[RMDB]
Source: RMDB library TTRDEL, as collected in RNAgym. The record gives the reactivity of an RNA of 177 nucleotides to DMS and 2A3. DMS adducts were read by reverse transcription with MarathonRT. The DMS profile rests on 1,049 reads.
RNA sequence: GGGAACGACUCGAGUAGAGUCGAAAAGAUAUGGAUCCGUUAUGGGAGCGGGAUCGGAAACGAUUCGCAUCGAUCAUACGGAUCCUAAGUCAAAAGGGUUCAAGUAUCUUCGGAUACUUGAACCCAACGGUUGUGAAAGGUUCGCCUUUCACAACCGAAAAGAAACAACAACAACAAC
Reactivity to DMS in 0.01 (KOAc 150mM, MgCl2 10mM, bicine 150mM(pH8.5), 24C), signal-to-noise 1, nucleotides 027 to 126: g000a010u010a290u000g000g000a000u000c000c000g000u020u010a020u010g010g030g000a090g030c040g050g000g020a020u000c000g000g010a100a030a210c020g030a020u000u000c010g010c010a220u000c090g020a080u020c000a030u000a020c000g000g000a010u010c000c000u000a010a050g000u000c050a090a080a210a100g000g020g000u000u000c000a020a000g000u000a020u000c000u000u000c240g020g000a000u000a010c000u010u000g000a020a010c000c010c010a010a000
Reactivity to 2A3 in 0.01 (KOAc 150mM, MgCl2 10mM, bicine 150mM(pH8.5), 24C), signal-to-noise 1, nucleotides 027 to 126: g010a020u050a010u110g000g010a000u000c000c000g050u280u150a040u010g160g120g000a020g040c070g000g130g100a030u000c000g010g000a040a110a000c000g000a000u020u010c000g000c020a250u260c080g140a140u100c000a010u010a010c010g000g000a000u000c000c000u000a000a000g030u020c000a000a070a110a230g000g000g000u020u010c020a040a000g120u010a000u000c000u040u240c300g040g010a000u000a020c000u000u000g010a000a000c000c000c000a000a000

Annotation
The RNA was probed in 150 mM KOAc, 10 mM MgCl2 and 150 mM bicine (pH 8.5) at 24 C.